Chemical mapping of a 177-nucleotide RNA with 2A3 and DMS. Source: RMDB library TTRDEL, as collected in RNAgym. The DMS profile rests on 683 reads.
RNA sequence: GGGAACGACUCGAGUAGAGUCGAAAAGAUAUGGAAGCUGGGUCGCCGUGUAUCUCGGAAACGAGCCGAGCACGGAACUACGACGCCAGCUUCCUAAGUCAAAGUUCCAAUGUUCGCAUUGGAACAAGCCAUACAAUUCCUUCGGGAAUUGUAUGGCAAAAGAAACAACAACAACAAC
Reactivity to 2A3 in 0.01 (KOAc 150mM, MgCl2 10mM, bicine 150mM(pH8.5), 24C), signal-to-noise 1, nucleotides 027 to 126: g020a010u120a010u130g000g060a000a000g010c030u010g000g060g050u020c000g210c020c000g010u000g010u090a300u190c040u010c010g020g090a230a190a220c120g050a070g130c050c010g030a010g000c020a010c030g110g000a020a050c070u260a040c120g020a010c080g140c020c040a000g000c000u020u010c000c000u000a000a000g020u000c020a140a080a060g010u010u000c000c000a000a000u020g000u050u060c300g000c180a000u000u010g000g000a010a000c000a000a010
Reactivity to DMS in 0.01 (KOAc 150mM, MgCl2 10mM, bicine 150mM(pH8.5), 24C), signal-to-noise 1, nucleotides 027 to 126: g000a110u000a300u000g020g020a010a030g070c000u010g020g020g000u000c000g000c050c020g010u000g010u000a100u020c010u000c000g000g000a090a070a200c250g000a130g000c190c070g000a140g040c040a040c000g040g010a170a020c110u020a240c050g000a000c000g000c030c000a020g010c000u000u020c000c000u000a010a060g000u010c050a060a040a070g010u000u000c000c010a010a030u010g010u030u020c210g000c010a020u000u010g000g010a010a000c000a080a040
Source information: The reactions ran in a buffer of 150 mM KOAc, 10 mM MgCl2 and 150 mM bicine (pH 8.5), at 24 C.